[RMDB]
RNA sequence: GGGAACGACUCGAGUAGAGUCGAAAAGCGUCGAUCAGCUGGCCCUCGUCGCGCACCCCGCAGGCUAGGUCGACGGCGGCCUUCUCCAUGUAAAAAUAGUGCCGCACGCCGUACACGUGCACCGCCACGCGCUUGCCGUCCUCCGACAUGCCCAGCACAUAACGCUCUUGUUCGCAAGAGCGUUAUGAAAAGAAACAACAACAACAAC
Reactivity to 2A3 in 0.01 (KOAc 150mM, MgCl2 10mM, bicine 150mM(pH8.5), 24C), signal-to-noise 2, nucleotides 027 to 156: g030c000g030u060c020g050a090u110c080a020g050c030u020g010g000c020c030c000u000c040g010u000c030g020c020g000c060a190c020c000c020c010g060c010a020g010g030c010u040a050g090g000u020c010g000a000c000g000g000c000g010g070c000c000u120u080c050u030c000c070a140u170g110u300a000a040a140a080a010u150a120g040u090g040c050c040g040c050a070c040g070c040c020g100u140a050c040a010c000g010u000g010c000a030c040c080g050c030c030a060c060g000c000g020c030u020u200g000c000c000g020u000c030c000u000c010c010g080a090c020a060u110g070c000c030c000a000g070c040a000

Annotation
The record gives the reactivity of an RNA of 207 nucleotides to 2A3. It was measured as part of the RMDB library OK3TST. The reactions ran in a buffer of 150 mM KOAc, 10 mM MgCl2 and 150 mM bicine (pH 8.5), at 24 C.